[RMDB]
RNA sequence: GGGAACGACUCGAGUAGAGUCGAAAAACUCUGUAAGUUCGCUUACAGAGUACAGGCCGUGAUCGUAUAGUGGUUAGUACUCUGCGUUGUGGCCGCAGCAACCUCGGUUCGAAUCCGAGUCACGGCACCAGGUCCUCGGUUGCUUCGGCAACCGAGGCCCAAGUGAUGCUUUCGAGCAUCACUUGGGAAAAGAAACAACAACAACAAC
Reactivity to DMS in 0.01 (KOAc 150mM, MgCl2 10mM, bicine 150mM(pH8.5), 24C), signal-to-noise 1, nucleotides 027 to 156: a060c000u010c000u000g010u000a010a010g000u000u000c280g010c010u000u000a010c000a000g010a030g000u000a010c020a150g030g050c010c000g120u010g010a060u000c040g010u000a080u000a080g020u000g050g040u040u000a130g010u000a070c010u000c000u000g020c050g030u010u010g010u000g000g000c120c040g030c030a090g010c140a020a010c030c000u010c000g010g050u000u010c040g060a300a080u000c000c000g000a050g010u040c000a050c010g000g020c020a070c020c000a030g010g020u010c050c010u000c020g020g010u000u000g040c050u000u000c300g040g000c020a030a000c010c000g010a010g000g040
Reactivity to 2A3 in 0.01 (KOAc 150mM, MgCl2 10mM, bicine 150mM(pH8.5), 24C), signal-to-noise 1, nucleotides 027 to 156: a000c000u010c000u000g010u010a000a020g040u050u160c180g010c110u000u010a000c000a000g000a000g000u010a010c030a030g110g000c000c000g000u000g000a000u000c010g020u000a000u000a020g090u160g060g220u130u000a000g010u000a000c000u000c000u020g010c020g030u060u140g150u190g160g070c060c000g000c000a000g010c000a000a000c000c000u000c000g010g010u010u000c000g000a020a000u000c000c000g010a000g000u010c000a000c010g000g060c010a000c010c010a020g090g210u070c000c000u000c000g000g000u010u000g020c020u000u140c270g070g010c000a000a000c000c000g010a000g030g000
Chemical mapping of a 207-nucleotide RNA with DMS and 2A3. For 2A3, 1,264 sequencing reads were counted. The DMS profile rests on 1,576 reads. It was measured as part of the RMDB library ARCHII.